An RNA of 177 nucleotides, treated with DMS and read out base by base. Source: RMDB library OK2TST, as collected in RNAgym.
RNA sequence: GGGAACGACUCGAGUAGAGUCGAAAAUCGUCGGUGAUCAAUUCUGGGGCGACCCUGGCGCUGGGUAAGUCGUUUUCGGCGUCGCGGUUCUGGGAUGAGGUGAUUGCCAACCGGGCGACGGCGUUCGUGGACCUAUACCAUUCGUGGUAUAGGUCCAAAAAGAAACAACAACAACAAC
Reactivity to DMS in 0.01 (KOAc 150mM, MgCl2 10mM, bicine 150mM(pH8.5), 24C), signal-to-noise 1, nucleotides 027 to 126: u010c040g020u000c040g030g010u010g010a090u010c060a060a090u000u020c040u000g000g000g010g020c070g000a070c040c010c010u000g020g020c060g020c030u010g010g010g010u010a040a070g010u000c020g000u000u000u000u000c020g020g010c020g020u000c000g040c280g000g020u030u000c020u010g000g000g000a100u010g010a120g020g000u000g010a090u010u000g030c020c030a130a110c020c060g000g020g020c040g000a060c050g010g000c040g000u030u000c070g040